RNA sequence: GGGAACGACUCGAGUAGAGUCGAAAAUUGAAGGUAAAACAGCCUGUGGGUGAAACACACCCACAGGGCCCAUUGGGCGCUAGCACUCUGGUAUCACGGUACCUUUGUGCGCUUGUUUUACCGAAGGGGAGGAGAACGUUCGCGUUCUCCAAAAGAAACAACAACAACAAC
Reactivity to 2A3 in 0.01 (KOAc 150mM, MgCl2 10mM, bicine 150mM(pH8.5), 24C), signal-to-noise 7, nucleotides 027 to 129: u120u110g080a080a030g000g000u010a010a000a010a000c000a000g000c000c000u000g000u000g000g000g000u010g030a020a100a000c100a020c000a000c040c000c000a000c000a000g000g000g000c000c000c000a020u240u300g010g000g000c020g010c130u120a070g000c010a000c000u000c010u010g000g000u000a000u020c030a050c240g100g000u000a010c000c000u000u010u010g010u010g000c010g000c000u000u000g000u000u010u000u000a000c000c000g000a000a010g010g000g010g010a090
Reactivity to DMS in 0.01 (KOAc 150mM, MgCl2 10mM, bicine 150mM(pH8.5), 24C), signal-to-noise 6, nucleotides 027 to 129: u030u010g000a160a090g000g000u010a010a000a010a010c010a000g000c000c020u000g000u020g010g030g000u000g000a090a130a110c210a180c000a030c010c000c020a020c020a000g010g010g040c030c010c020a010u000u120g040g020g040c000g040c000u040a040g050c020a020c010u010c030u020g000g000u000a000u040c040a130c280g000g000u000a020c010c040u000u030u000g010u000g000c020g010c010u010u010g000u000u010u000u000a000c000c020g000a070a040g020g000g010g020a260